[RMDB]
RNA sequence: GGGAACGACUCGAGUAGAGUCGAAAACUCUCGAGUUCCUCUAACUGCUUUCUUCCAUUCACCCACUGCUCGAGAACCUCUUCUCUGCUCCCGCGGUUCUUCCUCGAUUCGGACCGGCUCAUCUCGACAAGAGGCGGCAGUCCUCAGUACUCUUACUAAUCCAAAAUAGGUUCGCCUAUUUUGGAUUAAAAGAAACAACAACAACAAC
Reactivity to 2A3 in 0.01 (KOAc 150mM, MgCl2 10mM, bicine 150mM(pH8.5), 24C), signal-to-noise 2, nucleotides 027 to 156: c010u000c000u000c000g020a010g000u080u100c040c010u020c080u040a130a140c030u080g080c040u060u130u100c030u130u000c070c020a120u090u090c030a080c020c040c030a050c060u070g010c000u040c020g020a020g010a070a050c020c020u050c000u060u000c010u030c020u030g040c010u030c030c050c020g070c040g060g050u060u020c010u040u040c010c010u050c040g060a090u110u070c010g020g040a040c020c000g060g030c010u010c030a100u020c030u030c000g100a120c050a180a120g000a020g030g000c020g050g000c000a040g030u010c000c000u000c020a030g070u050a100c090u010c010u060u010a090c050u080
Structure probing data (2A3) for a 207-nucleotide construct. It was measured as part of the RMDB library VIROID. For 2A3, 1,520 sequencing reads were counted. 2A3 adducts were read by reverse transcription with SuperScript II with manganese.